[RMDB]
RNA sequence: GGGAACGACUCGAGUAGAGUCGAAAAUCGUACGGCCGAUCGUACAGCGCGUACACAUAUACAGACGGCGCCUCGUCGUACUCAUCGAUCGAUGAUCGUACAGUGGCCGAUCGAUCGUACUCGGAUCAAAACCGAAAGAUUUCGAUCUUUCGGUUUUAAAAGAAACAACAACAACAAC
Reactivity to DMS in 0.01 (KOAc 150mM, MgCl2 10mM, bicine 150mM(pH8.5), 24C), signal-to-noise 8, nucleotides 027 to 126: u010c100g000u000a020c000g010g010c060c010g010a020u000c020g010u000a070c150a110g000c030g020c070g030u000a050c090a140c220a130u000a160u010a110c180a120g010a070c050g000g000c060g020c040c060u010c070g000u000c070g010u000a020c050u000c020a030u000c010g010a100u010c190g000a030u000g010a040u000c160g010u000a020c020a100g020u000g010g010c080c010g000a020u000c000g000a020u000c010g010u000a010c010u000c140g010g000a140u010c120
Reactivity to 2A3 in 0.01 (KOAc 150mM, MgCl2 10mM, bicine 150mM(pH8.5), 24C), signal-to-noise 5, nucleotides 027 to 126: u130c020g000u000a000c000g000g010c020c010g010a010u020c020g020u080a070c030a090g030c160g010c000g070u200a080c050a010c020a100u180a030u090a260c070a060g100a040c010g060g050c010g050c000c040u070c050g090u030c050g000u040a040c030u020c030a030u020c010g260a160u160c120g030a030u050g010a030u110c080g010u010a010c000a030g030u040g060g010c030c010g000a010u010c010g000a000u000c000g000u000a000c030u030c120g070g030a070u140c090